[RMDB]
RNA sequence: GGGAACGACUCGAGUAGAGUCGAAAAUGCCUGGCAUCACCUACAGCCUGCGCGUGCUUGCCUUCACCGCCGUGGGCGAUGGCCCUCCCAGCCCCACCAUCCAGGUCAAGACGCAGCAGGGAGGUAGGUGGGGGCAUGCCGGCUGGGCAGCCAACAGGCUGUCUUAGGUUUUCGAACCUAAGACAGCAAAAGAAACAACAACAACAAC
Reactivity to 2A3 in 0.01 (KOAc 150mM, MgCl2 10mM, bicine 150mM(pH8.5), 24C), signal-to-noise 1, nucleotides 027 to 156: u050g030c000c040u030g010g000c000a050u010c000a070c020c000u000a000c080a060g110c000c000u000g050c010g010c030g060u250g110c000u000u000g000c020c000u160u160c140a160c070c090g010c030c050g060u040g010g000g030c040g140a180u130g080g030c000c080c000u090c010c040c010a020g000c010c000c010c000a000c020c010a010u060c030c020a010g000g060u140c030a010a000g000a040c010g000c030a090g000c000a000g130g040g040a160g080g090u050a060g000g000u010g000g000g000g000g050c010a000u060g030c040c000g040g040c040u070g000g020g000c030a040g030c010c000a070a060c020a020g140

Structure probing data (2A3) for a 207-nucleotide construct.
As a SHAPE reagent, 2A3 marks flexible, mostly unpaired nucleotides at the ribose 2'-OH.
The 2A3 profile rests on 788 reads.
Conditions: 150 mM KOAc, 10 mM MgCl2 and 150 mM bicine (pH 8.5), 24 C.